[RMDB]
An RNA of 207 nucleotides, treated with 2A3 and read out base by base. Source: RMDB library ARCHII, as collected in RNAgym. The RNA was probed in 150 mM KOAc, 10 mM MgCl2 and 150 mM bicine (pH 8.5) at 24 C. Values cover nucleotides 27 to 156.
RNA sequence: GGGAACGACUCGAGUAGAGUCGAAAACCAGACACUACAACGGUUCGCAGAUGGGCCGGGGGCGUCAAAACCCUGUAGUGUCACUCUACAUCUGCUAGUGCUGUUCCGGGUUACUUGGUUCAGUGCGAAAUAAUAGGUAACUCGCCAAAGUCCAGCCGGUAUGACUUUACUUCGGUAAAGUCAUACCAAAAGAAACAACAACAACAAC
Reactivity to 2A3 in 0.01 (KOAc 150mM, MgCl2 10mM, bicine 150mM(pH8.5), 24C), signal-to-noise 2, nucleotides 027 to 156: c010c000a000g010a000c010a000c010u000a010c000a270a140c030g000g030u030u020c120g010c000a010g020a060u030g000g000g000c000c000g020g010g000g010g000c000g020u080c040a030a030a040a060c000c000c020u040g000u000a020g000u000g000u000c000a060c010u280c050u130a100c010a020u000c000u010g010c000u000a020g000u000g020c010u000g010u010u000c000c010g030g000g000u040u020a030c010u020u030g010g000u010u030c020a010g010u020g020c010g030a030a000a030u300a090a010u040a050g000g000u000a020a000c020u020c130g060c060c040a150a100a010g030u090c030c040a030g050c100c080